[RMDB]
RNA sequence: GGGAACGACUCGAGUAGAGUCGAAAAAAGCCAGAAGCGGUAUUGGUCAAGGCUAUACCGACAGCGCACCUUCAAAAGGGCGCUUAAUCCCCGGCCAAGCGCCGAAAUAUGAAUAGACACCGCUGGGUUGGUAAUGCGAAUUCGUUCGCAUUACCAAAAAAGAAACAACAACAACAAC
Reactivity to DMS in 0.01 (KOAc 150mM, MgCl2 10mM, bicine 150mM(pH8.5), 24C), signal-to-noise 3, nucleotides 027 to 126: a110a080g010c000c010a150g030a080a050g020c000g010g000u000a070u010u020g020g010u040c070a170a090g020g010c030u000a070u010a080c080c050g020a100c290a030g010c010g010c000a090c020c020u010u020c300a080a080a110a070g020g010g000c010g020c000u010u010a070a050u000c010c000c020c020g020g000c020c030a090a110g010c150g000c020c030g010a010a080a070u060a070u030g020a080a040u020a130g010a060c050a020c020c010g000c000u000g000g000g030